RNA sequence: GGGAACGACUCGAGUAGAGUCGAAAAUGGGCUACCAGUCAGCGAAAAAUGAUACAGGACGAAAAAAACAUAAUUCGAGAUUUUUCAGGAUGGAUUUUUUUAGGUAUCUAUCAAAACUAUUCUGAUGCAACGUAGAGCACGUUCGCGUGCUCUACAAGUUGUAAGAUGAGUUCGCUCAUCUUACAACAAAAGAAACAACAACAACAAC
Reactivity to DMS in 0.01 (KOAc 150mM, MgCl2 10mM, bicine 150mM(pH8.5), 24C), signal-to-noise 1, nucleotides 027 to 156: u010g030g010g010c010u040a080c020c000a170g000u010c050a100g010c040g000a020a120a040a190a090u010g000a140u000a110c010a150g040g000a100c040g010a010a000a060a180a060a040a070c020a140u000a050a180u000u000c040g000a180g000a160u000u000u000u000u000c000a050g020g010a020u010g000g000a000u000u000u000u020u020u000u000a060g030g010u000a130u010c000u000a040u000c080a000a010a010a010c030u000a040u000u000c010u000g000a020u020g010c120a060a080c110g040u010a000g000a000g010c020a040c000g060u010u020c300g030c000g020u000g000c020u000c000u000a000c000a020a050
Reactivity to 2A3 in 0.01 (KOAc 150mM, MgCl2 10mM, bicine 150mM(pH8.5), 24C), signal-to-noise 3, nucleotides 027 to 156: u090g000g020g000c010u040a050c050c010a020g080u050c010a010g050c010g060a090a020a020a030a030u140g030a030u060a090c060a040g030g040a040c040g080a080a000a020a000a020a040a010c050a040u180a120a070u130u080c070g010a030g030a190u060u170u050u090u100c000a000g020g000a010u010g040g000a060u000u010u010u020u000u010u040a020g040g030u130a060u200c000u000a020u020c020a000a010a000a020c000u010a010u040u000c000u010g010a010u050g030c030a040a040c090g000u000a000g000a000g000c000a000c010g000u010u030c080g010c000g060u000g000c000u010c000u000a000c000a000a000